[RMDB]
RNA sequence: GGGAACGACUCGAGUAGAGUCGAAAAGGUCUACCGCUACAGCUACUCGUUUGAUGGCGAGACGUGGCACACCGUGCCGGUGACGUAUGAGGCGUGGAAGCUGUCGGACGACUACAUCGGCGGGCGCCUCCACCGAAGUAUUCGUACUUCGGUGGAGAAAAGAAACAACAACAACAAC
Reactivity to 2A3 in 0.01 (KOAc 150mM, MgCl2 10mM, bicine 150mM(pH8.5), 24C), signal-to-noise 3, nucleotides 027 to 126: g060g000u050c040u080a080c040c000g000c070u050a030c050a060g000c020u010a010c000u010c010g020u000u030u060g140a050u030g050g030c020g000a040g010a020c020g070u110g060g000c030a020c010a040c060c140g050u060g100c040c040g050g050u090g070a040c010g080u120a080u190g120a050g100g000c010g000u030g050g060a160a010g010c000u030g040u020c010g020g010a020c030g000a000c030u070a030c030a040u100c070g010g010c010g020g020g020c050g040c000
Reactivity to DMS in 0.01 (KOAc 150mM, MgCl2 10mM, bicine 150mM(pH8.5), 24C), signal-to-noise 4, nucleotides 027 to 126: g000g010u000c040u000a250c030c000g020c080u010a060c160a100g020c130u010a050c140u000c000g000u000u010u000g030a070u010g010g030c010g000a300g010a030c060g010u010g020g000c010a060c020a100c170c150g010u000g010c090c050g030g010u010g000a090c100g000u000a060u000g000a100g000g000c020g010u010g000g000a090a240g010c000u000g010u010c000g000g000a080c060g000a020c060u020a030c060a070u010c100g000g010c000g000g010g010c270g000c110
An RNA of 177 nucleotides, treated with 2A3 and DMS and read out base by base.
For 2A3 the reverse transcriptase was SuperScript II with manganese.
For DMS, 3,598 sequencing reads were counted.
In probing experiments dimethyl sulfate is read out at A N1 and C N3, which are open when not base-paired.